Chemical mapping of a 177-nucleotide RNA with DMS and 2A3. The RNA was probed in 150 mM KOAc, 10 mM MgCl2 and 150 mM bicine (pH 8.5) at 24 C. High DMS reactivity at an A or C suggests that its Watson-Crick edge is free.

RNA sequence: GGGAACGACUCGAGUAGAGUCGAAAAUGCUUUUCUUCGUGUUCACAGCGGACCUUGAUUUAAAUGUCCAUACAAUUAAGGCACGCGGUGAAUGCCAAGAGAGAUGGCUUGCGGAGGUUCGCCUCCGGUAUACAGUGCGAUUCGUCGCACUGUAUACAAAAGAAACAACAACAACAAC
Reactivity to DMS in 0.01 (KOAc 150mM, MgCl2 10mM, bicine 150mM(pH8.5), 24C), signal-to-noise 6, nucleotides 027 to 126: u010g010c020u000u000u010u010c000u000u000c300g010u000g010u010u000c000a000c010a040g030c010g000g010a120c000c000u000u000g000a010u000u000u010a060a110a100u010g010u010c210c170a070u000a090c220a010a020u000u000a000a020g000g010c300a030c000g020c010g010g040u000g000a000a000u000g000c010c090a010a010g000a020g010a030g000a060u000g010g000c080u000u000g010c020g010g000a020g020g010u000u010c210g020c010c000u000c000c000g000
Reactivity to 2A3 in 0.01 (KOAc 150mM, MgCl2 10mM, bicine 150mM(pH8.5), 24C), signal-to-noise 4, nucleotides 027 to 126: u160g010c010u040u080u090u010c000u010u010c000g000u000g000u000u000c000a000c000a010g020c010g010g030a070c000c000u000u010g020a030u040u040u140a120a220a110u240g120u090c070c000a020u080a110c060a030a020u010u010a000a000g000g000c040a010c040g000c000g010g010u010g000a000a000u010g010c000c000a020a000g010a000g000a010g020a070u100g080g040c070u050u130g040c020g010g000a000g010g040u070u090c150g110c020c000u000c000c000g000